[RMDB]
Chemical mapping of a 207-nucleotide RNA with DMS and 2A3. The reactions ran in a buffer of 150 mM KOAc, 10 mM MgCl2 and 150 mM bicine (pH 8.5), at 24 C. For DMS, 2,443 sequencing reads were counted.
RNA sequence: GGGAACGACUCGAGUAGAGUCGAAAAUGAAGCAAAUCCAUAAUUGCCAAUGAUGAGCAAUUCGCUAUUGCCGCCUAAAAACGGUUCGCCGGGGCUGCUAGAGCCUUGUUACCAAAGAUAGCCGGCGUUACGGCAUGAUGGUUCGCCAUCAUGCCAACCCCUCUCAAUAGUUCGCUAUUGAGAGGGGAAAAGAAACAACAACAACAAC
Reactivity to DMS in 0.01 (KOAc 150mM, MgCl2 10mM, bicine 150mM(pH8.5), 24C), signal-to-noise 2, nucleotides 027 to 156: u010g010a090a090g010c010a040a070a170u000c020c040a140u000a070a080u000u000g020c000c020a060a280u020g020a210u000g010a150g020c000a010a030u000u000c090g020c000u000a090u000u010g000c000c030g050c030c070u010a060a050a110a100a090c070g000g030u000u000c010g050c080c020g030g030g020g030c010u000g000c070u000a150g000a050g010c000c010u000u000g010u000u000a150c070c000a090a140a070g000a120u000a140g000c040c030g010g020c050g010u000u000a070c090g000g040c010a000u000g000a040u000g010g040u000u000c300g040c040c020a010u010c010a000u000g020c000c000a000a050
Reactivity to 2A3 in 0.01 (KOAc 150mM, MgCl2 10mM, bicine 150mM(pH8.5), 24C), signal-to-noise 4, nucleotides 027 to 156: u130g020a050a010g040c030a060a010a110u070c050c010a040u110a130a040u060u020g000c020c020a190a070u250g100a160u080g010a160g020c000a010a030u050u040c030g000c130u120a100u120u160g010c000c000g000c020c010u060a050a040a000a010a010c030g010g030u050u030c000g000c030c000g000g030g000g020c010u060g030c060u130a060g080a010g180c020c030u020u080g070u070u070a090c040c030a160a050a010g090a040u030a010g090c000c000g000g020c000g020u040u070a060c070g020g000c000a010u000g000a000u000g000g070u030u020c070g040c060c000a010u000c000a000u000g010c000c010a000a000